[RMDB]
RNA sequence: GGGAACGACUCGAGUAGAGUCGAAAAAGGUGAUUUCUCCUGCACCUUUAUCAAUGGAGGAACUCGACUUUGCUGUGGGUCCCAAAGGGACCUUAGGUGCAGACAGUUACCGGCGGUGAAGUGUGAGCGGACCAUCUUGUUUCGACAAGAUGGUCCGAAAAGAAACAACAACAACAAC
Reactivity to DMS in 0.01 (KOAc 150mM, MgCl2 10mM, bicine 150mM(pH8.5), 24C), signal-to-noise 1, nucleotides 027 to 126: a000g000g000u000g000a300u000u000u000c020u010c000c000u000g070c060a010c000c000u000u000u060a000u000c250a000a010u020g010g080a000g000g000a000a290c070u000c000g010a030c030u000u000u000g000c020u000g000u020g030g000g040u000c000c000c090a030a080a220g030g040g000a000c010c010u000u000a000g020g000u000g000c010a250g000a240c300a030g000u000u000a040c010c000g000g000c010g000g010u000g000a000a000g020u040g010u030g000a040g020
Reactivity to 2A3 in 0.01 (KOAc 150mM, MgCl2 10mM, bicine 150mM(pH8.5), 24C), signal-to-noise 2, nucleotides 027 to 126: a000g030g020u040g010a040u000u030u000c000u020c000c000u170g010c010a000c010c000u040u250u110a030u010c060a030a010u300g030g000a010g030g010a060a070c030u010c020g020a010c000u010u000u090g010c000u010g000u060g020g000g000u000c020c000c020a100a080a140g020g000g000a000c000c000u010u040a000g000g000u000g020c010a050g170a240c030a040g030u000u180a030c020c000g080g010c020g010g010u020g030a030a020g000u030g010u050g100a030g070